[RMDB]
RNA sequence: GGGAACGACUCGAGUAGAGUCGAAAACUUCAAAAUGCAGCUUGACUGUGAUUCAUGGCACAAAGCUGGAAUAACCCUGCCAGUUCUUAGAAGCUUUAAGAUUCAUCGUCUUGAACUUGAUACACAUCCUUAUUAAGUUCUUCGGAACUUAAUAAGGAAAAGAAACAACAACAACAAC
Reactivity to DMS in 0.01 (KOAc 150mM, MgCl2 10mM, bicine 150mM(pH8.5), 24C), signal-to-noise 3, nucleotides 027 to 126: c050u000u010c060a060a090a120a110u000g010c050a060g010c020u020u000g000a120c060u010g000u000g010a060u010u010c030a110u010g010g020c020a100c100a120a020a040g000c010u010g020g020a130a090u020a090a240c040c040c050u010g000c020c030a030g000u000u010c060u010u010a100g020a090a060g000c070u000u000u000a080a060g000a050u000u000c070a020u000c270g010u000c020u000u000g000a030a030c070u010u000g000a080u000a080c170a070c180a150u000
Reactivity to 2A3 in 0.01 (KOAc 150mM, MgCl2 10mM, bicine 150mM(pH8.5), 24C), signal-to-noise 4, nucleotides 027 to 126: c010u090u050c020a040a060a020a090u160g060c030a010g020c010u020u040g040a070c010u020g020u020g030a020u030u100c050a070u130g030g000c030a010c040a090a030a000g000c000u020g000g010a040a020u070a060a060c010c000c000u010g040c030c010a050g040u070u030c020u050u100a080g030a170a020g010c000u060u120u100a090a030g010a030u080u040c010a020u030c070g010u000c000u000u030g020a050a060c010u040u080g040a040u110a120c090a010c010a120u020

Structure probing data (DMS and 2A3) for a 177-nucleotide construct. The 2A3 profile rests on 3,978 reads. For DMS, 1,571 sequencing reads were counted.